[RMDB]
RNA sequence: GGGAACGACUCGAGUAGAGUCGAAAAGAAGUUCGGGGGACGGCUGAUUGACUGUCCAUCGGCCCUGAUGGUCGGUGUCGAAGCCUCGUCCCGCAGGAUCAGUGGUGAUGGGGCCCUGACUGGAGGGUCAGGGUAAACCAUCUUAGUCAUGGGAACGGUUAAGGAAACCGUUCGCGGUUUCCUUAACAAAAGAAACAACAACAACAAC
Reactivity to 2A3 in 0.01 (KOAc 150mM, MgCl2 10mM, bicine 150mM(pH8.5), 24C), signal-to-noise 1, nucleotides 027 to 156: g100a040a010g030u100u150c090g020g040g020g020g000a000c050g000g000c010u060g040a240u100u200g010a050c000u060g030u010c000c000a010u000c040g010g040c070c020c100u140g010a030u060g000g030u000c090g060g140u140g040u120c110g020a040a000g000c000c020u050c060g010u030c010c000c000g000c000a000g060g010a100u090c030a010g090u050g070g020u100g040a020u010g000g000g010g000c010c000c000u010g000a000c000u020g100g120a140g110g050g000u000c000a010g000g000g000u010a000a030a000c000c000a000u000c000u000u060a050g000u000c030a030u100g000g070g000a070a040c060g030
Reactivity to DMS in 0.01 (KOAc 150mM, MgCl2 10mM, bicine 150mM(pH8.5), 24C), signal-to-noise 1, nucleotides 027 to 156: g020a130a160g020u000u000c020g020g040g030g010g010a060c020g020g020c130u000g010a090u000u010g020a100c000u000g010u030c000c010a020u000c020g060g000c140c030c080u020g010a040u020g040g030u000c040g070g040u000g000u000c020g010a300a060g010c020c000u010c040g020u000c020c000c000g050c120a000g010g010a080u010c060a190g010u010g020g020u000g020a040u020g030g030g030g030c000c030c000u000g020a010c030u010g030g030a300g050g060g020u000c000a000g000g020g010u000a030a040a090c000c000a020u000c000u000u040a050g020u010c040a080u000g010g000g010a150a160c060g010